[RMDB]
RNA sequence: GGGAACGACUCGAGUAGAGUCGAAAAGGGGUAGCAAUAAUGAUGGGAUGAUGGCAGAUUCCUGAAUGUGGAGUCUAAAGCUGGUUCAGGACCUUUUUCUGUAGCAAUUUGCAAGUUGUCCCUGUUAUUGAGUUGGUGCUACUUUGAGGAAGGGCUAGCACAGUUUAGCAUUCGUGCUAAACUGUGCAAAAGAAACAACAACAACAAC
Reactivity to 2A3 in 0.01 (KOAc 150mM, MgCl2 10mM, bicine 150mM(pH8.5), 24C), signal-to-noise 1, nucleotides 027 to 156: g020g000g010g030u020a020g040c010a000a020u020a090a030u070g120a050u160g000g000g000a050u060g070a070u080g050g020c000a000g010a010u080u040c000c000u000g020a050a000u120g020u150g170g110a000g030u170c110u260a220a070a060g000c060u040g000g020u000u020c010a000g050g040a010c020c000u110u300u100u020u020c030u070g030u010a010g000c000a050a150u000u000u300g000c020a000a070g030u060u080g020u090c010c010c000u010g000u020u000a080u030u070g070a100g000u030u030g070g000u050g020c010u020a070c030u050u200u090g070a080g000g000a090a030g000g070g000c060u080a000
An RNA of 207 nucleotides, treated with 2A3 and read out base by base. It was measured as part of the RMDB library OK3TST. Conditions: 150 mM KOAc, 10 mM MgCl2 and 150 mM bicine (pH 8.5), 24 C.